[RMDB]
RNA sequence: GGGAACGACUCGAGUAGAGUCGAAAAAAAUCUGUAAAGCACGCCAUAUCGCCGAAAGGCACACUUAAUUAUUAAAGGUAAUACACUAUGUCCGGUAAAAUGACUGGUAUCGUAAAAUGGUUCAACGUCUGCAUAUUCAGUUCGCUGAAUAUGCAGAAAAAGAAACAACAACAACAAC
Reactivity to DMS in 0.01 (KOAc 150mM, MgCl2 10mM, bicine 150mM(pH8.5), 24C), signal-to-noise 2, nucleotides 027 to 126: a100a020a040u000c030u000g000u000a070a070a070g000c050a050c070g000c020c010a070u010a070u030c150g000c010c000g000a050a120a080g010g000c060a060c110a030c090u000u030a080a040u020u020a060u000u010a060a040a050g000g010u010a050a020u040a080c120a020c090u030a030u000g010u010c050c130g020g000u030a030a040a070a090u020g020a030c050u000g000g000u000a020u000c090g000u010a040a090a040a080u000g000g000u000u010c040a010a190c300g000
Reactivity to 2A3 in 0.01 (KOAc 150mM, MgCl2 10mM, bicine 150mM(pH8.5), 24C), signal-to-noise 4, nucleotides 027 to 126: a000a000a050u000c010u020g090u070a080a000a130g020c030a020c060g020c050c020a030u030a020u200c080g040c040c020g060a000a000a020g000g110c000a030c020a010c000u090u090a120a090u210u240a180u130u170a220a110a010g030g040u040a030a020u020a070c040a020c050u070a050u070g060u010c000c000g060g050u040a080a100a130a090u160g040a050c010u020g010g000u020a000u100c030g010u000a000a020a070a180u080g020g050u020u020c030a060a000c050g090